[RMDB]
RNA sequence: GGGAACGACUCGAGUAGAGUCGAAAAGAUAUGGAAACACGCUACAGAGGUGAAUCGGAAACGAUUCACUCCCCACCUGUAGAACUACGUGCUUCCUAAGUCAAACUAGAUUGUUCGCAAUCUAGAAGUACUAAAGGAUGUUCGCAUCCUUUAGUACAAAAGAAACAACAACAACAAC
Reactivity to DMS in 0.01 (KOAc 150mM, MgCl2 10mM, bicine 150mM(pH8.5), 24C), signal-to-noise 7, nucleotides 027 to 126: g010a040u010a300u010g000g000a010a010a010c000a020c010g010c010u000a010c010a010g010a160g030g010u000g010a010a000u010c000g010g000a090a100a150c010g000a010u000u000c000a000c010u010c040c010c010c030a300c090c000u000g000u000a010g000a060a050c100u030a300c020g010u000g010c040u000u000c000c000u000a030a090g010u010c050a080a120a170c010u000a000g000a020u000u000g010u000u020c210g010c010a020a010u010c000u000a000g010a110a100
Reactivity to 2A3 in 0.01 (KOAc 150mM, MgCl2 10mM, bicine 150mM(pH8.5), 24C), signal-to-noise 5, nucleotides 027 to 126: g020a040u120a030u140g000g010a020a020a000c000a000c020g020c020u010a000c000a000g000a010g010g000u010g010a000a000u000c000g010g030a060a050a010c000g000a000u020u010c000a010c010u020c000c010c000c000a020c000c000u000g000u010a000g030a040a020c080u260a040c070g010u010g000c010u010u010c000c000u020a130a020g070u060c060a050a030a040c010u000a000g000a020u010u020g060u110u140c300g020c170a000a000u000c010u000a000g010a050a050